Structure probing data (2A3 and DMS) for a 177-nucleotide construct. Source: RMDB library OK2TRN, as collected in RNAgym. The reactions ran in a buffer of 150 mM KOAc, 10 mM MgCl2 and 150 mM bicine (pH 8.5), at 24 C. 2A3 adducts were read by reverse transcription with SuperScript II with manganese.

RNA sequence: GGGAACGACUCGAGUAGAGUCGAAAACUGAGGGCUAUUUACCCGCCUGGCCGCAGCUUGGCGCAAGCCUGAUGUAUGAACAGUAUUAUGGCGAUGAAGUCGGGCUGUUUGGUAAAGAUAAGCGCCAAUGAAACGUUGUAUUCGUACAACGUUUCAUAAAAGAAACAACAACAACAAC
Reactivity to 2A3 in 0.01 (KOAc 150mM, MgCl2 10mM, bicine 150mM(pH8.5), 24C), signal-to-noise 2, nucleotides 027 to 126: c030u050g050a180g010g040g030c010u040a080u120u110u090a070c010c000c000g000c010c020u010g000g030c020c030g100c060a040g010c030u010u030g010g000c010g000c050a060a000g010c000c030u020g000a040u110g050u030a070u090g080a110a040c030a100g060u020a060u220u040a090u150g050g010c050g030a100u130g120a140a020g010u020c000g000g010g010c020u020g000u070u160u110g010g000u020a050a020a000g060a040u110a100a050g000c050g060c000c010a010
Reactivity to DMS in 0.01 (KOAc 150mM, MgCl2 10mM, bicine 150mM(pH8.5), 24C), signal-to-noise 5, nucleotides 027 to 126: c050u000g000a120g020g000g030c100u000a110u000u010u000a070c040c040c060g020c050c030u000g010g010c010c170g010c120a070g010c030u000u010g010g020c010g020c070a080a130g010c000c000u000g000a090u000g010u000a060u010g010a100a080c160a100g010u000a060u010u010a210u010g000g000c010g020a140u010g020a090a180g020u000c010g010g000g000c010u010g000u000u000u010g020g010u000a050a050a070g010a110u000a040a070g010c060g000c010c020a100